[RMDB]
RNA sequence: GGGAACGACUCGAGUAGAGUCGAAAAGAUAUGGAUUUAGCCGUGCGCUCCCAUCGAUCUCGGAAACGAGGGAGGGAGCGAACUACACGUGCUAAAUCCUAAGUCAAAAUCUGCGUUCGCGCAGAAACGAGUUGUAUUUGUUCGCAAAUACAACUCGAAAAGAAACAACAACAACAAC
Reactivity to 2A3 in 0.01 (KOAc 150mM, MgCl2 10mM, bicine 150mM(pH8.5), 24C), signal-to-noise 2, nucleotides 027 to 126: g040a040u090a050u200g000g000a000u000u000u000a010g010c030c000g010u030g010c020g000c010u020c000c000c000a110u300c010g050a040u010c010u010c020g030g030a140a090a070c010g000a000g000g020g000a060g000g000g000a000g030c000g000a000a010c000u090a040c010a000c020g130u140g020c010u000a010a000a000u000c000c000u000a010a010g000u010c020a000a000a030a300u020c010u010g000c000g040u060u060c280g000c000g010c120a000g040a050a000a030
Reactivity to DMS in 0.01 (KOAc 150mM, MgCl2 10mM, bicine 150mM(pH8.5), 24C), signal-to-noise 2, nucleotides 027 to 126: g020a020u000a300u000g010g000a000u000u000u000a000g020c000c040g010u000g000c020g000c010u000c000c000c000a300u010c190g000a050u000c030u000c010g000g000a120a090a130c000g010a020g010g000g000a030g020g000g000a010g010c000g000a010a000c090u010a300c000a000c010g000u010g030c000u000a000a000a000u010c000c000u020a020a070g010u010c060a120a040a120a090u000c000u000g000c010g000u000u000c270g010c010g000c000a010g000a000a040a180